[RMDB]
Chemical mapping of a 177-nucleotide RNA with 2A3 and DMS.
The RNA was probed in 150 mM KOAc, 10 mM MgCl2 and 150 mM bicine (pH 8.5) at 24 C.
Source: RMDB library OK1LIB, as collected in RNAgym.

RNA sequence: GGGAACGACUCGAGUAGAGUCGAAAAUUGCGCUGUUGCACAUCCUGUGGAAGGUGUUCCAGGCAUACACUGAAAUGGAUUCCUGGUCAGGCGUUCUUAAAAGUCUUAUGUAUGCUGCCAUCGCAGGCCCUUCAGUUAAGUUCGCUUAACUGAAGGGAAAAGAAACAACAACAACAAC
Reactivity to 2A3 in 0.01 (KOAc 150mM, MgCl2 10mM, bicine 150mM(pH8.5), 24C), signal-to-noise 6, nucleotides 027 to 126: u090u040g010c050g010c030u040g030u110u150g010c090a020c020a150u060c000c010u040g010u040g150g050a110a060g020g000u020g100u150u080c040c010a010g010g000c010a010u030a020c010a010c060u100g050a080a060a100u080g020g010a020u030u050c010c000u100g050g210u170c070a010g020g000c010g020u040u010c000u060u200a150a160a060a060g050u020c030u070u110a120u100g030u000a020u030g010c030u040g020c020c010a040u050c030g010c020a010g050g000
Reactivity to DMS in 0.01 (KOAc 150mM, MgCl2 10mM, bicine 150mM(pH8.5), 24C), signal-to-noise 3, nucleotides 027 to 126: u010u050g000c130g030c070u010g010u040u010g050c090a080c190a080u040c040c000u000g000u010g000g030a080a060g000g040u000g000u000u010c030c020a300g000g040c030a040u020a020c030a060c070u000g000a050a100a090u020g000g000a060u000u030c010c000u010g020g020u010c150a030g000g000c070g000u010u000c010u020u020a040a070a110a080g000u010c040u000u000a030u000g000u000a000u000g000c010u000g020c020c020a120u010c030g010c040a040g000g020
The DMS profile rests on 5,747 reads.